This 207-nucleotide RNA was probed chemically with 2A3 and DMS. For DMS the reverse transcriptase was MarathonRT. For 2A3, 6,931 sequencing reads were counted.
RNA sequence: GGGAACGACUCGAGUAGAGUCGAAAACGAUCAGUACGUUCGCGUACUGAUCGAAGCUACUGGAGACAGUAGCAAGUCUAAGACCUUGUUAGGCUUAAACAAGGAAAAAUGGAGGAAGGCCGGACCUCCAUACUUAGACAAGGGCCAACCGGCCAACUGAGUAGGUAGUAUUCGUACUACCUACUCAAAAAGAAACAACAACAACAAC
Reactivity to 2A3 in 0.01 (KOAc 150mM, MgCl2 10mM, bicine 150mM(pH8.5), 24C), signal-to-noise 5, nucleotides 027 to 156: c000g000a000u010c000a000g000u010a000c010g010u020u110c240g010c010g090u000a000c000u000g000a000u000c000g000a000a000g000c000u000a000c000u000g010g020a050g010a020c000a010g000u000a000g000c000a010a030g000u000c000u000a000a020g020a120c000c000u010u010g010u030u040a120g160g080c070u050u220a090a010a010c020a010a010g020g030a060a100a060a020a030u030g010g010a010g020g030a100a250g010g000c030c000g040g020a160c000c000u000c010c000a000u010a020c000u000u000a000g000a010c040a050a060g080g030g020c050c010a000a000c010c010g000g000c000c000a000a030c070
Reactivity to DMS in 0.01 (KOAc 150mM, MgCl2 10mM, bicine 150mM(pH8.5), 24C), signal-to-noise 3, nucleotides 027 to 156: c020g000a000u000c000a010g010u000a030c010g010u010u000c250g090c030g050u000a020c000u010g000a020u000c000g000a040a080g000c000u000a010c000u000g010g000a300g000a300c010a010g000u000a020g020c000a040a040g030u000c000u000a030a040g000a300c000c000u000u010g000u000u000a120g010g030c160u020u010a140a060a020c020a040a040g020g000a020a050a070a160a110u000g010g000a060g010g000a080a050g040g010c000c020g000g020a300c010c000u000c010c010a030u000a020c030u000u000a030g000a030c030a090a120g030g000g000c060c070a050a080c010c040g030g000c000c020a010a030c160